[RMDB]
RNA sequence: GGGAACGACUCGAGUAGAGUCGAAAAGUAGUUAUGCUGAAAAUCGUUGAGGUUGUAUGGAAUAGGUUAACCGUAAGACCUUAAGUUGAAAAACUUUCAAAUUAAUCUCAGGUAAAUUACUUUGAGUAAAACCUUCGUCGUUUCGACGACGAAGGAAUCAAAUGGAUGUGUUCGCACAUCCAUUUGAAAAAGAAACAACAACAACAAC
Reactivity to 2A3 in 0.01 (KOAc 150mM, MgCl2 10mM, bicine 150mM(pH8.5), 24C), signal-to-noise 3, nucleotides 027 to 156: g030u030a010g020u010u070a080u240g080c040u020g060a010a030a070a160u160c090g040u020u030g020a010g050g010u010u000g030u050a050u070g050g040a090a090u080a090g150g010u090u100a090a040c040c020g020u030a090a020g020a020c000c000u020u020a020a000g030u040u040g050a060a070a020a060a060c010u030u210u100c060a030a080a180u140u100a100a090u050c020u020c050a010g030g000u090a060a280a130u070u030a030c000u140u070u110g040a040g030u050a010a110a040a050c000c000u000u000c000g010u000c000g040u020u120u090c260g080a020c000g000a000c000g000a000a000g010g000a000a000
Reactivity to DMS in 0.01 (KOAc 150mM, MgCl2 10mM, bicine 150mM(pH8.5), 24C), signal-to-noise 2, nucleotides 027 to 156: g040u000a030g000u000u020a060u000g010c020u000g040a060a090a050a100u010c090g050u010u010g000a020g030g020u000u000g000u010a050u010g000g010a040a200u000a070g030g040u000u000a160a170c000c010g010u010a080a170g000a030c010c000u000u010a010a080g020u000u000g000a120a060a130a090a060c040u000u000u000c050a060a090a080u010u000a030a110u000c050u010c020a100g050g020u010a010a020a060u000u000a000c020u000u000u000g010a150g000u000a080a040a070a120c000c010u000u010c000g010u010c010g000u000u000u000c290g020a060c000g020a010c000g000a010a020g040g000a010a010